[RMDB]
An RNA of 177 nucleotides, treated with 2A3 and DMS and read out base by base.

RNA sequence: GGGAACGACUCGAGUAGAGUCGAAAAGAUAUGGAUUCGCCGUGAGCGAUAAGCCUCAUCGGAAACGAUAGGCUUUUGACGCUCGGGGAAUCCUAAGUCAAAAGUGCAUACGUUCGCGUAUGCACAACAACCCUACAACGUUCGCGUUGUAGGGUUGAAAAGAAACAACAACAACAAC
Reactivity to 2A3 in 0.01 (KOAc 150mM, MgCl2 10mM, bicine 150mM(pH8.5), 24C), signal-to-noise 3, nucleotides 027 to 126: g020a000u020a010u050g010g010a020u020u020c140g210c300c050g110u200g100a020g010c200g070a060u020a100a010g000c010c010u070c120a020u000c010g010g030a050a020a000c010g000a000u000a010g010g010c000u040u030u010u040g100a090c040g000c020u000c000g000g000g010g000a000a000u030c010c000u010a070a000g030u000c020a000a020a130a120g000u010g000c000a000u000a010c000g030u020u070c220g000c000g170u000a000u000g000c020a000c000a000a000
Reactivity to DMS in 0.01 (KOAc 150mM, MgCl2 10mM, bicine 150mM(pH8.5), 24C), signal-to-noise 3, nucleotides 027 to 126: g010a040u000a230u010g000g000a000u000u000c000g000c010c010g030u040g020a020g020c000g020a100u000a020a020g000c000c000u000c290a000u010c000g010g010a070a070a090c000g020a010u000a020g000g000c000u000u000u000u020g000a160c050g020c000u000c010g010g010g000g000a010a000u000c000c000u000a010a050g010u000c040a090a070a120a120g010u000g010c000a000u000a010c000g010u000u010c260g020c020g020u000a000u000g000c010a000c000a040a090
2A3 adducts were read by reverse transcription with SuperScript II with manganese. Conditions: 150 mM KOAc, 10 mM MgCl2 and 150 mM bicine (pH 8.5), 24 C. For 2A3, 5,853 sequencing reads were counted. It was measured as part of the RMDB library TTRDEL.